[RMDB]
RNA sequence: GGGAACGACUCGAGUAGAGUCGAAAACUGUUUGAGGGAGUUUUAAUCAUUUCCCAGGAUAAUGUUGGAAGCAUUGGAAAACUUCCAAAAAUUGUUGAAACUGAAGAAUUUAAUGUUAAGAUGUGAACGAUUUAUGCUGUUUCGACAGCAUAAAUCGAAAAGAAACAACAACAACAAC
Reactivity to 2A3 in 0.01 (KOAc 150mM, MgCl2 10mM, bicine 150mM(pH8.5), 24C), signal-to-noise 1, nucleotides 027 to 126: c000u020g110u300u010u110g090a130g000g000g010a040g000u000u060u000u000a110a160u100c010a000u000u070u070c010c010c000a000g000g000a150u170a180a050u100g140u030u080g090g000a070a050g000c030a010u000u060g020g170a000a000a000a000c010u000u000c000c000a040a020a020a020a020u100u090g000u000u000g100a060a000a000c060u110g090a000a000g080a120a090u000u240u140a110a050u300g060u030u110a060a060g000a080u140g110u150g240a030a030
Reactivity to DMS in 0.01 (KOAc 150mM, MgCl2 10mM, bicine 150mM(pH8.5), 24C), signal-to-noise 1, nucleotides 027 to 126: c020u010g010u000u030u000g000a170g000g000g000a010g000u000u000u030u010a100a210u000c170a030u000u000u000c000c000c000a200g000g000a170u040a030a010u000g000u020u050g030g000a050a080g020c060a010u040u000g010g010a090a010a010a100c040u010u000c000c000a050a160a200a040a090u000u000g000u000u000g000a000a080a060c070u000g000a080a080g010a040a060u000u000u080a060a010u130g000u020u000a080a060g000a130u000g010u090g000a030a290

Notes:
Chemical mapping of a 177-nucleotide RNA with 2A3 and DMS. For DMS the reverse transcriptase was MarathonRT.